The record gives the reactivity of an RNA of 207 nucleotides to 2A3. For 2A3, 336 sequencing reads were counted. It was measured as part of the RMDB library OK3TST.
[RMDB]
RNA sequence: GGGAACGACUCGAGUAGAGUCGAAAAUGAACCUUCAUGUACAAGUGUUUUCAUUUCUCUUGGGUAGAUAUCUAGUAGAGUUGCUAGUCAUAUGGUAACUGUAUUGUUAAAUCUUUUGAGAAAUUGCUAGACUGUUUUCCAAGUAAUGUGUAAGGGAGCCAUAUGCCUCAUUCGUGAGGCAUAUGGCAAAAGAAACAACAACAACAAC
Reactivity to 2A3 in 0.01 (KOAc 150mM, MgCl2 10mM, bicine 150mM(pH8.5), 24C), signal-to-noise 1, nucleotides 027 to 156: u080g010a000a020c000c000u000u080c070a120u100g070u070a030c140a010a140g020u030g150u170u110u020u080c070a050u000u060u050c000u000c060u000u030g070g000g030u070a020g060a080u130a070u120c040u020a010g000u000a030g010a010g160u000u000g000c020u000a000g130u060c080a150u200a120u270g020g000u000a010a010c000u030g070u120a030u110u040g020u150u030a130a170a000u060c000u010u120u100u120g020a020g040a030a100a000u080u040g000c020u000a010g000a120c060u010g010u090u040u030u010c020c010a000a000g050u060a070a130u120g080u020g010u040a030a070g010g000g010a020